[RMDB]
RNA sequence: GGGAACGACUCGAGUAGAGUCGAAAAAGCGGUUUAUCCGAGGGACCGGGGGAGCUUGGUAAGAAGGGAAAACAUCGGACGGACCGUCCUCCGCUCUCAGUCGAAUCGAUCGCGCGUCACCGAGAGGAACUUUAGUCAGGUUCGCCUGACUAAAGUUAAAAGAAACAACAACAACAAC
Reactivity to DMS in 0.01 (KOAc 150mM, MgCl2 10mM, bicine 150mM(pH8.5), 24C), signal-to-noise 3, nucleotides 027 to 126: a090g010c020g020g020u000u010u010a060u000c050c000g010a100g000g010g010a010c140c030g020g010g020g010g030a050g010c070u000u010g010g030u010a040a040g020a240a170g000g000g000a090a070a120a140c160a120u010c050g010g010a240c160g010g000a050c010c020g000u010c000c020u010c020c020g020c210u000c000u000c020a090g000u000c030g000a050a040u000c070g000a040u000c050g010c020g010c110g000u000c080a150c010c010g000a090g010a130g000g010
Reactivity to 2A3 in 0.01 (KOAc 150mM, MgCl2 10mM, bicine 150mM(pH8.5), 24C), signal-to-noise 2, nucleotides 027 to 126: a000g010c020g000g030u010u020u030a020u010c010c000g000a010g010g030g000a010c040c020g020g010g000g000g020a030g100c090u180u140g100g010u060a060a040g040a040a020g110g040g050a080a110a020a070c040a100u110c040g000g050a030c020g050g020a010c000c000g040u000c000c010u000c000c010g040c000u020c000u000c000a110g150u000c010g010a020a020u030c040g040a030u030c020g000c030g030c030g110u020c010a130c080c060g030a100g010a030g060g100